RNA sequence: GGGAACGACUCGAGUAGAGUCGAAAAGAUAUGGAUUAUCCUGCUUUUGACGACGGUCGGAAACGAUGCGUCGAUAAGCAGGUAAUCCUAAGUCAAACCCCGUAAUGGGUUCGCCCAUUACGGGGAAGAAUAACCUUUGGUUCGCCAAAGGUUAUUCAAAAGAAACAACAACAACAAC
Reactivity to DMS in 0.01 (KOAc 150mM, MgCl2 10mM, bicine 150mM(pH8.5), 24C), signal-to-noise 5, nucleotides 027 to 126: g010a040u010a300u000g000g000a010u000u000a010u020c010c000u000g000c010u000u000u000u010g010a150c050g010a020c020g010g000u000c010g000g000a110a100a180c010g010a010u000g010c000g020u000c000g010a060u000a010a020g010c010a000g000g000u000a000a000u000c000c000u000a020a080g010u010c030a120a130a220c010c000c000c000g010u000a000a010u000g000g010g010u000u010c250g010c010c000c000a010u000u000a000c000g000g000g000g000a000a010
Reactivity to 2A3 in 0.01 (KOAc 150mM, MgCl2 10mM, bicine 150mM(pH8.5), 24C), signal-to-noise 6, nucleotides 027 to 126: g010a010u060a030u120g010g010a010u010u010a060u300c010c000u010g010c020u130u150u110u240g170a090c020g000a000c020g020g020u000c010g020g040a030a060a020c020g010a020u300g300c000g020u000c000g000a010u020a020a010g000c000a000g020g000u000a000a000u000c000c000u010a030a000g020u010c020a050a030a300c000c000c000c000g000u010a000a000u010g020g000g060u040u070c280g130c010c000c000a000u000u000a000c010g000g000g000g000a010a010